[RMDB]
An RNA of 177 nucleotides, treated with 2A3 and DMS and read out base by base. It was measured as part of the RMDB library M2PK50. The DMS profile rests on 1,413 reads. The reactions ran in a buffer of 150 mM KOAc, 10 mM MgCl2 and 150 mM bicine (pH 8.5), at 24 C. High DMS reactivity at an A or C suggests that its Watson-Crick edge is free. For DMS the reverse transcriptase was MarathonRT.

RNA sequence: GGGAACGACUCGAGUAGAGUCGAAAAGUCUUCUUGUUCGCAAGAAGACAAACGGGCAAAAGCUGUCUGCCCGUAAGACGGCUAAAAACUUCAAAAAGAAGAAAAGGCGGGUGUUCGCACCCGCCAACCAUAUAUAGCGGUUCGCCGCUAUAUAUGGAAAAGAAACAACAACAACAAC
Reactivity to 2A3 in 0.01 (KOAc 150mM, MgCl2 10mM, bicine 150mM(pH8.5), 24C), signal-to-noise 1, nucleotides 027 to 126: g000u000c000u000u000c020u010u010g030u050u040c080g010c150a000a000g000a000a000g020a000c020a000a000a000c030g030g000g000c040a060a060a080a010g000c010u000g000u000c020u060g040c010c000c010g000u010a000a000g010a000c000g000g000c000u070a020a040a020a120a060c040u060u070c070a250a260a240a100a110g010a020a020g050a040a140a030a030g000g050c030g000g000g020u000g040u050u120c180g010c090a010c000c070c010g000c000c000a000a020
Reactivity to DMS in 0.01 (KOAc 150mM, MgCl2 10mM, bicine 150mM(pH8.5), 24C), signal-to-noise 2, nucleotides 027 to 126: g000u010c010u000u010c000u010u000g010u000u020c140g040c010a030a020g000a020a000g010a010c020a010a040a130c180g040g010g030c120a090a050a070a040g010c030u010g000u000c020u000g010c000c010c010g000u020a020a070g000a040c020g000g000c000u010a050a040a080a100a130c040u000u000c000a080a050a130a120a160g000a010a000g010a120a150a150a060g000g030c020g030g020g030u000g040u010u040c190g000c010a020c000c000c010g000c000c010a000a000